[RMDB]
RNA sequence: GGGAACGACUCGAGUAGAGUCGAAAAGACGAACGAUAACACAAAUGUUCCACGGUGCAGAAGGGUCCCUCACAUGAGGAUCACCCAUGUAACUCGGACAGGAUAUGCUUUUGGGAAAAAGAGAGAAGUGUCAAGAUACAUUCGUGUAUCUUGACACAAAAGAAACAACAACAACAAC
Reactivity to 2A3 in 0.01 (KOAc 150mM, MgCl2 10mM, bicine 150mM(pH8.5), 24C), signal-to-noise 5, nucleotides 027 to 126: g060a020c060g020a090a010c060g100a130u110a260a020c070a010c030a100a080a100u110g020u110u020c010c000a030c060g030g030u040g010c010a010g040a220a090g060g020g000u030c000c010c000u000c020a220c040a190u300g000a010g030g010a030u120c020a030c000c000c000a010u020g020u020a060a050c000u010c060g000g000a000c010a020g080g000a050u080a030u210g020c010u050u020u100u070g050g020g000a010a060a010a080a000g100a010g010a000g040a200a020
Reactivity to DMS in 0.01 (KOAc 150mM, MgCl2 10mM, bicine 150mM(pH8.5), 24C), signal-to-noise 5, nucleotides 027 to 126: g010a090c080g020a050a070c070g010a080u020a050a110c080a040c110a050a140a120u000g010u000u000c010c030a090c140g010g020u010g020c030a050g010a090a120g010g000g000u000c110c000c000u000c050a130c190a090u010g020a020g010g000a030u000c210a030c010c000c010a060u000g000u000a040a060c020u000c160g010g000a060c050a050g000g000a120u010a050u010g010c020u000u010u000u000g010g010g010a050a050a020a060a060g000a090g010a080g000a060a110